RNA sequence: GGGAACGACUCGAGUAGAGUCGAAAACGCCAACGACGAGCGUUUCGCUCUCGCCGCUUAAUCCCGGCGGGCGCUGCACCGGCAGGUCUCUGGGCCGGGUGGUUCCAGCGUAAGCUGGGCCGCUGCAGUGUCAUUUACAGAGAAUCGCGAGCAGGGCCAUAUCUAGGGGGUUCGCCCCCUAGAUAUGAAAAGAAACAACAACAACAAC
Reactivity to 2A3 in 0.01 (KOAc 150mM, MgCl2 10mM, bicine 150mM(pH8.5), 24C), signal-to-noise 2, nucleotides 027 to 156: c050g010c030c020a120a060c160g200a060c060g020a080g030c010g010u020u060u130c070g010c010u010c010u020c020g010c000c000g000c010u060u090a040a030u160c010c000c000g000g020c010g010g010g000c000g000c010u010g000c010a060c070c000g040g000c010a030g010g110u040c040u030c020u130g010g020g010c000c010g060g010g040u020g040g010u300u300c000c000a010g000c010g030u150a090a030g010c000u000g000g030g000c010c000g020c030u060g000c000a030g010u030g000u050c010a050u100u170u120a060c040a020g030a020g020a080a080u080c080g010c020g070a050g010c000a020g010g000g070c000
Reactivity to DMS in 0.01 (KOAc 150mM, MgCl2 10mM, bicine 150mM(pH8.5), 24C), signal-to-noise 1, nucleotides 027 to 156: c040g030c040c000a050a090c020g020a090c070g000a160g010c020g010u020u020u000c080g000c040u010c010u000c000g030c010c000g030c060u000u020a090a200u000c110c040c000g020g030c050g030g010g050c040g000c020u000g000c010a300c030c030g040g050c020a140g000g000u000c050u000c040u000g040g000g020c010c000g020g000g040u000g030g030u000u000c010c000a020g010c080g000u000a110a160g030c010u000g020g020g010c000c000g040c010u000g040c030a060g000u010g000u000c020a200u020u000u000a240c020a060g000a080g010a040a070u000c110g020c020g000a210g020c010a060g010g000g000c100